An RNA of 207 nucleotides, treated with DMS and 2A3 and read out base by base. The 2A3 profile rests on 9,703 reads. It was measured as part of the RMDB library RNAMAK. For DMS the reverse transcriptase was MarathonRT. Conditions: 150 mM KOAc, 10 mM MgCl2 and 150 mM bicine (pH 8.5), 24 C. As a SHAPE reagent, 2A3 marks flexible, mostly unpaired nucleotides at the ribose 2'-OH.
[RMDB]
RNA sequence: GGGAACGACUCGAGUAGAGUCGAAAACGCUGGGAACCUUCCAUCUAAGACAGGAAGUUGUCAGGCUGUUGCUGAAGCGCGCACGGCAACAGCCUUGGAUUUACUUCUCGAGAUGGAGGUUCCUGUGCUGAAGCGCGCACGGCAACCGAAAGGUGCGGAUAUGAAUAUCCUUCGGGAUAUUCAUAUCAAAAGAAACAACAACAACAAC
Reactivity to DMS in 0.01 (KOAc 150mM, MgCl2 10mM, bicine 150mM(pH8.5), 24C), signal-to-noise 2, nucleotides 027 to 156: c090g010c020u020g030g010g000a020a010c000c010u000u010c010c010a040u000c010u000a230a120g000a120c300a050g010g010a030a030g010u000u010g050u010c060a140g020g040c000u010g000u010u000g030c000u000g000a010a070g010c010g030c020g000c020a300c020g000g030c010a060a030c000a010g010c010c000u000u000g000g010a120u010u000u000a050c050u000u000c010u000c020g000a050g020a040u000g000g000a070g030g000u000u000c010c000u010g020u000g020c010u010g000a080a110g030c040g010c010g010c010a130c030g010g000c050a130a150c020c020g010a070a140a170g030g020u000g010c020g000
Reactivity to 2A3 in 0.01 (KOAc 150mM, MgCl2 10mM, bicine 150mM(pH8.5), 24C), signal-to-noise 7, nucleotides 027 to 156: c040g020c020u040g010g020g020a010a010c000c000u290u090c080c010a010u010c010u120a230a120g110a170c100a100g080g040a020a010g010u100u090g060u080c030a020g000g010c000u000g010u000u000g000c010u030g030a240a100g010c020g000c010g000c030a040c060g010g000c020a000a000c000a000g030c000c000u000u050g000g000a000u020u060u240a020c010u010u010c090u070c070g080a040g000a000u000g000g000a000g000g000u000u000c000c000u000g000u020g000c020u070g030a070a030g000c010g000c000g000c020a010c010g080g000c030a150a110c030c020g060a100a040a020g020g000u020g020c000g030